RNA sequence: GGGAACGACUCGAGUAGAGUCGAAAAGUGUCCAAGCCGGUCGUGUAUGAACAUUAUCGGCGGCAAGGAAGGCCUCUACGCGGUGGUGGUCGACCGUGAGAUGUCGGCAUUGUUGGACGGCAUCACACCCUGGAUUAAUCUUCGGAUUAAUCCAGGGAAAAGAAACAACAACAACAAC
Reactivity to DMS in 0.01 (KOAc 150mM, MgCl2 10mM, bicine 150mM(pH8.5), 24C), signal-to-noise 4, nucleotides 027 to 126: g010u010g000u010c000c020a080a230g020c010c010g030g020u000c010g030u000g010u010a130u000g000a130a060c070a060u000u000a010u000c010g010g010c020g000g000c100a070a120g000g000a050a190g000g000c040c020u000c030u000a060c050g020c130g000g010u000g000g020u000g020g000u000c010g000a180c000c020g000u010g010a080g000a030u000g010u000c000g010g020c050a110u010u000g020u000u010g020g000a040c010g000g000c020a020u000c030a110c140a150
Reactivity to 2A3 in 0.01 (KOAc 150mM, MgCl2 10mM, bicine 150mM(pH8.5), 24C), signal-to-noise 2, nucleotides 027 to 126: g110u090g050u030c010c010a080a020g020c000c000g020g050u030c040g020u030g010u040a210u300g230a130a020c020a010u040u000a010u020c000g000g010c000g020g020c040a010a030g040g000a010a030g030g000c020c020u000c020u030a070c080g110c060g230g000u040g010g010u030g030g030u040c020g000a030c020c000g040u050g060a080g000a000u020g030u000c000g000g010c070a140u000u140g080u070u020g060g030a020c000g010g030c010a010u040c020a010c010a010